[RMDB]
RNA sequence: GGGAACGACUCGAGUAGAGUCGAAAACACAUCGACCCGAGGGUUUGCUACUUCGAUGUCGUCUGUUCCUAUCCUGGUGCUGCAUAAGACACCAAGGGUGGGGCUGUUCGCCCAUUAAAAGGGAUCCUCGUCCAAUGCAAUUCGUUGCAUUGGACGAAAAAGAAACAACAACAACAAC
Reactivity to 2A3 in 0.01 (KOAc 150mM, MgCl2 10mM, bicine 150mM(pH8.5), 24C), signal-to-noise 6, nucleotides 027 to 126: c060a000c010a060u020c010g020a040c020c030c030g070a190g060g050g020u050u080u180g070c020u020a050c010u070u140c020g020a030u200g010u010c020g010u010c010u050g040u130u210c000c000u010a030u000c000c000u000g000g010u000g000c010u020g000c020a110u120a300a050g030a110c010a010c000c000a090a090g000g000g010u000g000g000g000g000c010u000g010u090u110c070g050c010c010c000a040u120u260a090a120a020a030g040g010g000a030u010c000c010
Reactivity to DMS in 0.01 (KOAc 150mM, MgCl2 10mM, bicine 150mM(pH8.5), 24C), signal-to-noise 3, nucleotides 027 to 126: c230a110c150a100u000c010g000a020c080c060c050g000a110g010g030g020u000u000u020g020c040u010a020c040u000u020c010g010a010u030g000u000c020g010u000c010u000g000u000u020c000c010u010a010u000c010c010u010g010g000u000g000c010u000g010c300a120u020a120a060g000a130c000a000c000c000a040a080g020g010g010u000g010g020g000g000c050u010g010u000u000c120g010c030c010c010a090u040u020a020a030a130a100g000g000g000a110u010c080c040